RNA sequence: GGGAACGACUCGAGUAGAGUCGAAAAAUGCCACAGAUGCUUGGAUUUUACUAUUGGAUUUUGCUGCCGGAAUAGGGCUUUCGGGACACUUAUUCCUUUGCUUAAGACCAACUCUGUUUUCGCCUUUCUUUGUCGCUAUAUUCGUAUAGCGACAAAGAAAAGAAACAACAACAACAAC
Reactivity to 2A3 in 0.01 (KOAc 150mM, MgCl2 10mM, bicine 150mM(pH8.5), 24C), signal-to-noise 4, nucleotides 027 to 126: a000u120g010c020c010a030c020a030g050a040u060g030c090u020u040g050g020a230u060u050u070u050a070c040u060a050u060u110g050g000a010u030u050u030u090g040c060u040g020c020c000g000g050a050a050u090a150g090g050g010c000u000u050u020c030g070g010g010a020c020a000c060u010u050a040u050u050c000c000u010u070u080g030c010u040u030a030a000g020a020c000c000a020a020c000u000c010u020g070u010u010u050u070c070g040c000c020u010u010u000
Source: RMDB library RFM100, as collected in RNAgym. Chemical mapping of a 177-nucleotide RNA with 2A3.